[RMDB]
RNA sequence: GGGAACGACUCGAGUAGAGUCGAAAAUUGCAUUGCACAGCGAUAGUAUGGAUGGGACAUUGGUAUUUACAGUACUAAUGCAAAUACUGUAUUUUUCUAUAUAGUGCGCAAUAUGUAGGAAUUUGCAGGAACUAAGUAGGUUCGCCUACUUAGUUCCAAAAGAAACAACAACAACAAC
Reactivity to DMS in 0.01 (KOAc 150mM, MgCl2 10mM, bicine 150mM(pH8.5), 24C), signal-to-noise 1, nucleotides 027 to 126: u010u000g000c030a100u010u030g050c020a050c070a060g000c120g000a030u000a110g010u000a050u000g010g020a100u000g030g000g020a110c010a030u000u000g010g030u010a000u000u000u030a170c300a180g000u000a010c010u000a000a020u000g000c050a120a050a050u010a090c020u000g010u000a050u000u000u000u000u000c000u020a080u000a050u010a070g010u000g020c080g040c050a030a060u000a040u010g010u000a060g020g010a030a050u010u000u010g000c080a100
Reactivity to 2A3 in 0.01 (KOAc 150mM, MgCl2 10mM, bicine 150mM(pH8.5), 24C), signal-to-noise 1, nucleotides 027 to 126: u060u050g000c040a020u000u150g010c000a040c000a030g050c010g020a050u000a030g060u030a060u070g010g030a050u050g030g000g120a030c010a000u000u030g020g000u040a100u070u220u080a090c060a020g020u000a000c010u000a000a020u100g020c010a040a080a020u130a110c040u010g000u020a040u020u070u000u000u010c010u000a050u000a030u010a170g040u040g000c060g020c010a050a030u020a090u180g110u070a040g060g050a080a080u000u000u070g080c070a030
This 177-nucleotide RNA was probed chemically with DMS and 2A3. For DMS, 1,055 sequencing reads were counted. For DMS the reverse transcriptase was MarathonRT. Reactivities are given for positions 27 through 126.